[RMDB]
RNA sequence: GGGAACGACUCGAGUAGAGUCGAAAAGAUAUGGAGCGCGGAGGGAGAAAGUAGUCGGAAACGACUAUAGUUUCAUCGAUCUCCCGCUCCUAAGUCAAAUCCUACAUACGUUCGCGUAUGUAGGAAACCCUAGUGAUAGGUUCGCCUAUCACUAGGGAAAAGAAACAACAACAACAAC
Reactivity to DMS in 0.01 (KOAc 150mM, MgCl2 10mM, bicine 150mM(pH8.5), 24C), signal-to-noise 2, nucleotides 027 to 126: g020a010u000a000u010g000g000a000g030c010g010c300g000g010a030g000g000g020a010g020a030a030a210g010u000a010g000u000c000g000g000a000a020a020c000g000a020c000u000a010u000a030g030u000u000u000c000a300u010c300g000a010u040c000u000c000c000c010g020c000u000c000c000u010a000a030g000u000c000a110a120a180u000c000c000u000a010c000a000u000a000c000g010u010u030c250g010c020g010u000a000u000g020u000a010g000g000a000a020a050
Reactivity to 2A3 in 0.01 (KOAc 150mM, MgCl2 10mM, bicine 150mM(pH8.5), 24C), signal-to-noise 2, nucleotides 027 to 126: g000a000u010a000u040g000g000a000g020c050g090c300g030g000a020g020g000g000a030g010a010a010a000g000u010a000g010u000c000g020g010a020a010a000c000g000a000c000u000a010u020a060g280u000u050u010c190a300u300c030g010a020u020c000u010c000c000c000g000c010u000c000c000u000a010a010g000u000c000a020a000a160u020c000c000u000a000c000a010u000a000c010g040u020u070c140g000c000g180u010a000u020g000u000a010g020g000a040a050a020
This 177-nucleotide RNA was probed chemically with DMS and 2A3. The RNA was probed in 150 mM KOAc, 10 mM MgCl2 and 150 mM bicine (pH 8.5) at 24 C.